[RMDB]
Source information: Structure probing data (2A3) for a 177-nucleotide construct. Values cover nucleotides 27 to 126. Conditions: 150 mM KOAc, 10 mM MgCl2 and 150 mM bicine (pH 8.5), 24 C. Source: RMDB library OK2TST, as collected in RNAgym. For 2A3 the reverse transcriptase was SuperScript II with manganese. The 2A3 profile rests on 555 reads.
RNA sequence: GGGAACGACUCGAGUAGAGUCGAAAAGCAUGGCGCAUAAAUUGAGACAUGUGUUUUUCAAAUGGUAAUAAAAAGAUUUUAUCCGCUUCUUUUAGGAGUGGUCGCAUUGGAAAAAUGGAUGUCAACGGUCUGUCUUCGAUUUCGAUCGAAGACAGACAAAAGAAACAACAACAACAAC
Reactivity to 2A3 in 0.01 (KOAc 150mM, MgCl2 10mM, bicine 150mM(pH8.5), 24C), signal-to-noise 1, nucleotides 027 to 126: g000c030a060u120g030g050c100g060c000a050u170a050a030a160u140u190g010a100g080a040c000a000u130g020u000g010u300u000u060u040u020c000a000a000a030u010g030g030u110a150a000u150a090a120a040a060a020g070a040u170u120u100u240a140u000c000c000g010c000u000u050c000u030u300u100u260a080g010g000a000g010u010g000g030u070c110g050c040a000u020u000g000g000a010a010a010a010a010u010g000g030a000u000g020u000c030a130a000c070g020